Conditions: 150 mM KOAc, 10 mM MgCl2 and 150 mM bicine (pH 8.5), 24 C. Structure probing data (2A3 and DMS) for a 177-nucleotide construct.
[RMDB]
RNA sequence: GGGAACGACUCGAGUAGAGUCGAAAAAAGAUUGGGACGAAGGGAAGCAAAUGUUGCGCAAUUUGUACACUGAGAUUGUGUAUACACCAAUACUAGUUCCAGAUGGUACAGUGGUCAAGAAAUUUAACAGUAUGACAGGGUUCGCCCUGUCAUACUGAAAAGAAACAACAACAACAAC
Reactivity to 2A3 in 0.01 (KOAc 150mM, MgCl2 10mM, bicine 150mM(pH8.5), 24C), signal-to-noise 3, nucleotides 027 to 126: a010a000g120a030u070u060g000g010g010a010c040g040a060a040g050g040g040a000a000g070c120a100a030a120u150g010u030u020g020c020g010c000a030a050u000u020u030g030u040a010c040a010c040u010g000a010g000a080u040u000g000u000g000u050a020u050a110c040a040c000c030a020a000u060a210c000u060a010g070u000u000c020c000a010g000a130u190g010g040u040a030c010a000g010u000g020g040u050c020a100a050g080a100a120a020u070u100u050a100a030
Reactivity to DMS in 0.01 (KOAc 150mM, MgCl2 10mM, bicine 150mM(pH8.5), 24C), signal-to-noise 3, nucleotides 027 to 126: a000a040g000a080u000u000g020g000g010a080c070g010a110a160g000g000g010a140a090g000c170a050a170a200u000g020u000u000g000c030g000c060a030a040u020u000u010g000u020a030c120a070c080u050g020a060g000a030u030u030g000u000g020u000a010u020a010c070a110c110c020a070a070u030a070c040u000a110g000u000u000c020c000a060g000a080u010g000g010u000a040c060a040g020u000g000g000u000c090a070a080g000a020a070a120u000u010u000a030a220
For 2A3 the reverse transcriptase was SuperScript II with manganese. The DMS profile rests on 4,708 reads.